[RMDB]
Chemical mapping of a 207-nucleotide RNA with DMS and 2A3.
2A3 adducts were read by reverse transcription with SuperScript II with manganese.
For DMS, 2,087 sequencing reads were counted.
The reactions ran in a buffer of 150 mM KOAc, 10 mM MgCl2 and 150 mM bicine (pH 8.5), at 24 C.

RNA sequence: GGGAACGACUCGAGUAGAGUCGAAAAGAAAGUCCGAACCGGCGGUUACAGUCCGCGACUCGGUCGCCUCCAGCGACCGGUUGACCAGGUGAAAUUCCUGGACCGACGGUUAAAGUCCGGAUGGGAGAAAACAAUGGCUUGUUCGCAAGCCAUUGAACGAUACUACUUACUUCGGUAAGUAGUAUCGAAAAGAAACAACAACAACAAC
Reactivity to DMS in 0.01 (KOAc 150mM, MgCl2 10mM, bicine 150mM(pH8.5), 24C), signal-to-noise 2, nucleotides 027 to 156: g010a130a050a160g010u000c030c020g020a010a050c000c010g030g050c000g030g000u010u000a160c210a130g030u000c040c000g010c000g010a190c150u000c010g040g010u000c010g040c010c030u010c250c100a250g000c020g040a010c000c010g020g020u000u000g010a050c010c000a040g000g010u010g010a040a300a100u000u000c000c000u020g010g000a040c010c000g000a060c060g080g020u010u010a110a120a300g020u000c040c010g020g010a070u000g010g000g030a190g010a090a080a040a120c000a030a020u010g000g000c040u000u010g030u000u010c300g010c000a000a010g010c000c000a000u000u010g010a060a200
Reactivity to 2A3 in 0.01 (KOAc 150mM, MgCl2 10mM, bicine 150mM(pH8.5), 24C), signal-to-noise 1, nucleotides 027 to 156: g050a040a060a010g030u020c050c020g000a040a030c000c000g010g000c000g010g000u010u000a000c000a000g000u010c000c000g000c000g020a020c010u010c030g000g020u000c000g010c020c030u060c030c020a010g000c000g000a000c010c040g000g000u050u030g020a000c000c000a000g000g000u020g000a000a000a000u000u010c000c000u000g000g000a010c000c000g000a000c000g000g000u040u140a030a000a000g010u000c010c020g110g070a070u210g150g030g000a030g020a010a100a000a010c000a020a020u000g000g000c000u020u010g020u080u070c120g030c100a000a010g030c010c000a000u000u000g000a000a010